An RNA of 177 nucleotides, treated with DMS and 2A3 and read out base by base. Conditions: 150 mM KOAc, 10 mM MgCl2 and 150 mM bicine (pH 8.5), 24 C. The 2A3 profile rests on 8,442 reads.
[RMDB]
RNA sequence: GGGAACGACUCGAGUAGAGUCGAAAAACACGAGUCACCUCAGGCUAGUGUGCGUACUGUUACUGCAAACAGUGCAGAGUCUAGUCUACGGUGACUGGACUAUCUAGUGUUUGCAGUAACACUGGAAGCACUGCUAACUAUUCGUAGUUAGCAGUGCAAAAGAAACAACAACAACAAC
Reactivity to DMS in 0.01 (KOAc 150mM, MgCl2 10mM, bicine 150mM(pH8.5), 24C), signal-to-noise 5, nucleotides 027 to 126: a040c010a040c020g000a020g020u000c000a110c140c130u020c230a090g020g000c020u000a090g010u010g020u000g010c150g000u000a100c140u000g010u000u000a000c010u000g000c010a010a010a010c000a060g000u000g030c210a050g010a060g010u000c010u000a020g010u000c000u000a120c300g030g010u010g000a000c000u000g000g010a030c020u000a050u010c030u000a070g010u000g000u000u000u000g000c030a010g000u000a010a010c010a030c080u000g000g000a190a170
Reactivity to 2A3 in 0.01 (KOAc 150mM, MgCl2 10mM, bicine 150mM(pH8.5), 24C), signal-to-noise 4, nucleotides 027 to 126: a000c010a000c010g010a010g020u020c020a070c120c100u130c140a080g020g000c010u020a040g010u010g010u050g060c090g070u080a060c060u030g000u000u000a000c000u010g000c020a000a020a000c010a060g200u030g070c040a020g010a000g040u000c000u010a000g000u000c000u060a090c230g230g100u120g000a000c000u000g000g010a000c010u020a080u120c020u020a070g170u030g010u040u000u010g030c000a020g010u000a000a010c000a020c000u030g050g040a150a020